An RNA of 177 nucleotides, treated with 2A3 and DMS and read out base by base.
It was measured as part of the RMDB library M2PK50.
The 2A3 profile rests on 1,090 reads.

RNA sequence: GGGAACGACUCGAGUAGAGUCGAAAAGCUGUUCUGUUCGCAGAACAGCAAAGGGAAGCUUCUCAAGCAUUUCAAGGUAGGGAGCACCAAGCAUUUCAAAAAAAACGGAUAAGUUCGCUUAUCCGAACAUUAUCGCACGGUUCGCCGUGCGAUAAUGAAAAGAAACAACAACAACAAC
Reactivity to 2A3 in 0.01 (KOAc 150mM, MgCl2 10mM, bicine 150mM(pH8.5), 24C), signal-to-noise 1, nucleotides 027 to 126: g000c000u000g020u000u000c000u010g060u020u120c280g000c090a000g000a000a000c000a000g000c050a020a020a020g000g010g020a090a050g000c010u120u000c080u000c060a060a080g090c030a130u090u280u210c070a130a040g110g000u030a020g070g060g000a000g020c000a030c040c030a010a030g100c020a120u190u230u190c210a110a100a050a020a000a000a020a020c000g000g000a000u000a000a010g080u060u070c220g040c100u000u000a000u000c000c000g000a000a000
Reactivity to DMS in 0.01 (KOAc 150mM, MgCl2 10mM, bicine 150mM(pH8.5), 24C), signal-to-noise 1, nucleotides 027 to 126: g000c000u000g000u000u010c000u000g010u000u010c180g000c010a010g000a030a010c000a000g000c000a020a050a030g030g010g010a150a050g000c010u010u000c010u000c020a080a130g030c060a080u000u000u050c250a070a150g030g020u000a070g000g020g000a020g020c030a070c050c030a130a160g020c160a060u010u000u000c020a000a020a000a150a020a000a190a120c020g000g000a030u000a000a000g030u020u020c180g020c010u000u000a000u000c010c020g000a030a060

Conditions: 150 mM KOAc, 10 mM MgCl2 and 150 mM bicine (pH 8.5), 24 C. 2A3 adducts were read by reverse transcription with SuperScript II with manganese. The DMS profile rests on 674 reads.